[RMDB]
RNA sequence: GGGAACGACUCGAGUAGAGUCGAAAAUGGCCGACGAAACACGUUCGAUACUUGAUGGUCAUAUUAUUCUGUCACGGAAAUUAGCGGCAGCUAAUCAUUAUCCUGCCAUUGACGUAUUACGUUCAGCAUAUGCUUCCUUUUUCGAAAGGAAGCAUAUAAAAGAAACAACAACAACAAC
Reactivity to DMS in 0.01 (KOAc 150mM, MgCl2 10mM, bicine 150mM(pH8.5), 24C), signal-to-noise 7, nucleotides 027 to 126: u010g000g020c000c050g020a080c070g010a130a100a090c140a070c080g010u000u010c080g010a070u010a080c050u000u000g000a070u000g010g010u010c150a050u010a240u000u000a080u000u010c040u010g010u000c070a060c100g010g000a050a070a080u000u000a040g000c040g000g010c130a050g020c300u000a020a020u000c140a040u000u000a080u010c060c040u000g000c050c040a060u000u000g010a030c080g020u000a050u000u010a090c040g010u010u000c070a090g010c150
Reactivity to 2A3 in 0.01 (KOAc 150mM, MgCl2 10mM, bicine 150mM(pH8.5), 24C), signal-to-noise 5, nucleotides 027 to 126: u080g060g010c040c020g040a070c030g050a060a060a020c100a030c090g070u130u090c040g040a030u050a110c030u040u110g030a040u100g050g030u030c040a000u020a030u170u060a050u070u040c040u060g130u100c030a020c110g100g050a090a110a130u090u050a090g010c020g070g000c020a010g000c030u040a030a030u030c050a040u070u150a060u110c010c010u040g010c030c030a010u000u060g040a010c040g010u040a100u120u140a030c040g020u060u100c050a010g010c010
Chemical mapping of a 177-nucleotide RNA with DMS and 2A3. Conditions: 150 mM KOAc, 10 mM MgCl2 and 150 mM bicine (pH 8.5), 24 C. For 2A3, 5,024 sequencing reads were counted. The DMS profile rests on 7,704 reads. For DMS the reverse transcriptase was MarathonRT.